[RMDB]
RNA sequence: GGGAACGACUCGAGUAGAGUCGAAAAGAUAUGGACGAGACAAGGGAGCUGUCCAUCGGAAACGAUGGUCCAGCGAAGAACUUGAUUCUCGUCCUAAGUCAAAGCUCAAAUCUUCGGAUUUGAGCAACUUCUAUACGACGUUCGCGUCGUAUAGAAGAAAAGAAACAACAACAACAAC
Reactivity to 2A3 in 0.01 (KOAc 150mM, MgCl2 10mM, bicine 150mM(pH8.5), 24C), signal-to-noise 3, nucleotides 027 to 126: g020a010u050a000u070g000g010a000c000g020a000g010a010c010a000a010g020g060g030a250g040c000u000g010u000c000c000a010u000c000g000g000a040a020a020c010g000a000u010g020g010u160c270c110a010g000c040g080a220a080g050a060a050c000u020u000g010a060u300u010c000u000c000g010u000c000c000u000a010a000g020u020c020a050a160a050g000c000u010c010a010a020a020u000c030u070u200c300g190g030a010u010u010u020g000a000g020c000a000a000
Reactivity to DMS in 0.01 (KOAc 150mM, MgCl2 10mM, bicine 150mM(pH8.5), 24C), signal-to-noise 3, nucleotides 027 to 126: g010a010u010a150u000g000g020a010c010g000a010g010a020c010a000a020g010g010g000a130g040c000u000g000u000c010c000a000u000c000g030g010a060a040a080c010g010a020u000g000g000u010c300c070a010g000c000g020a110a150g010a110a140c000u000u020g000a140u010u000c000u000c010g010u000c010c000u000a000a060g000u000c030a110a110a150g010c000u010c000a010a010a010u000c010u000u020c260g020g000a010u000u000u000g000a000g020c000a020a010